[RMDB]
RNA sequence: GGGAACGACUCGAGUAGAGUCGAAAAACGAAAACUACGCACUCGCAGCUUAAUAAUCUGCGCUGAGCCCUUCUCCCCCAGCUUGCCUGUGUCCUAGGGAAUUGGAAGGUCAUCCUUCACAGGAUCGUCUAGGUAAUCCCUUUCGAGGGAUUACCAAGGAAGGAGAUAUCUUCGGAUAUCUCCUUCCAAAAGAAACAACAACAACAAC
Reactivity to DMS in 0.01 (KOAc 150mM, MgCl2 10mM, bicine 150mM(pH8.5), 24C), signal-to-noise 1, nucleotides 027 to 156: a060c070g010a110a000a090a130c000u000a040c040g030c060a190c050u000c120g050c040a050g000c120u020u010a100a160u000a150a150u000c010u010g020c040g020c120u020g000a080g000c020c040c000u030u010c040u000c030c020c000c050c040a020g000c000u000u000g010c020c010u010g040u010g030u010c080c020u010a110g030g010g020a110a180u000u040g010g000a050a090g040g010u020c150a070u000c030c000u000u000c080a060c120a040g000g010a050u000c020g000u010c000u010a160g050g000u010a000a010u010c000c000c020u010u010u000c230g000a040g030g010g030a010u020u000a010c000c000a020a160
Reactivity to 2A3 in 0.01 (KOAc 150mM, MgCl2 10mM, bicine 150mM(pH8.5), 24C), signal-to-noise 1, nucleotides 027 to 156: a000c150g030a120a110a000a000c060u160a040c160g070c010a030c000u000c030g030c000a030g000c000u150u070a050a260u150a170a100u090c000u050g000c080g060c180u110g010a020g060c000c040c000u080u100c100u090c010c020c000c000c020a010g010c000u050u100g030c030c000u010g000u000g000u020c000c000u020a070g000g000g140a000a020u100u040g070g040a050a050g030g040u070c000a010u010c000c000u040u040c030a050c000a030g000g020a030u140c010g050u000c060u080a040g090g000u000a000a000u000c000c000c030u050u090u060c100g080a020g000g020g000a000u000u000a000c010c000a000a000
Source: RMDB library M2RFPK, as collected in RNAgym. An RNA of 207 nucleotides, treated with DMS and 2A3 and read out base by base. For 2A3, 462 sequencing reads were counted. 2A3 adducts were read by reverse transcription with SuperScript II with manganese. The reactions ran in a buffer of 150 mM KOAc, 10 mM MgCl2 and 150 mM bicine (pH 8.5), at 24 C.